An RNA of 177 nucleotides, treated with DMS and 2A3 and read out base by base.

[RMDB]
RNA sequence: GGGAACGACUCGAGUAGAGUCGAAAACGAAGGGCAACGUCAUCGACCCUCUCGAACUGAUGGACGAAUAUGGCGCAGAUGCCUUGCGCUUCACGCUGGCCAUCAUGGCAGCGCAGGGGCGUGACGAGACGCACUCAGCAUUCGUGCUGAGUGCGUCAAAAGAAACAACAACAACAAC
Reactivity to DMS in 0.01 (KOAc 150mM, MgCl2 10mM, bicine 150mM(pH8.5), 24C), signal-to-noise 1, nucleotides 027 to 126: c110g000a170a100g000g020g030c030a070a160c020g020u000c000a000u020c000g000a060c020c010c010u000c070u000c020g040a100a240c110u000g040a000u000g040g000a060c040g020a170a070u000a070u000g000g080c000g020c090a050g000a160u000g000c090c000u000u000g000c000g000c000u010u000c100a100c000g000c030u010g000g000c000c000a100u010c130a120u030g030g000c110a050g000c020g010c140a050g000g000g000g000c040g010u000g000a060c120g010a220
Reactivity to 2A3 in 0.01 (KOAc 150mM, MgCl2 10mM, bicine 150mM(pH8.5), 24C), signal-to-noise 1, nucleotides 027 to 126: c020g060a040a040g020g000g000c040a200a100c040g070u000c010a050u040c060g080a170c010c000c000u040c000u020c000g180a240a160c100u090g040a000u110g020g000a020c020g010a100a000u190a070u130g000g000c020g000c080a030g000a070u070g040c010c000u000u040g000c010g000c000u010u020c010a010c000g010c010u040g200g060c000c000a080u150c100a100u160g020g000c030a010g060c030g010c040a030g000g000g000g000c000g020u000g020a020c060g040a050

Reactivities are given for positions 27 through 126.